RNA sequence: GGGAACGACUCGAGUAGAGUCGAAAAGAAACGAACUCGAAAGAGUUCGAACGACGGGAAGCGAUGAGCAGCGAAAGAAACGCUGCACGCCGCAUCGCACGGCGAACCGUCGAAGCCGGAAACGGCACUCUGCAGCGCAGUUCGCUGCGCUGCAGAGAAAAGAAACAACAACAACAAC
Reactivity to 2A3 in 0.01 (KOAc 150mM, MgCl2 10mM, bicine 150mM(pH8.5), 24C), signal-to-noise 1, nucleotides 027 to 126: g100a000a110a000c000g000a010a010c000u010c000g040a090a000a000g000a000g000u010u000c010g000a040a000c020g000a000c000g020g000g000a060a000g010c010g030a040u070g030a010g060c000a070g020c000g050a080a300a180g240a010a150a000c000g000c010u000g000c000a020c000g070c050c010g030c000a090u140c000g000c070a040c030g040g000c030g070a100a090c000c000g000u010c050g040a160a000g000c000c000g020g000a000a110a010c000g000g000c050a010
Conditions: 150 mM KOAc, 10 mM MgCl2 and 150 mM bicine (pH 8.5), 24 C. Structure probing data (2A3) for a 177-nucleotide construct. Reactivities are rounded to 0.1 and cut off at 0 and 3. The data come from the RNA Mapping Database (RMDB), library OK1LIB.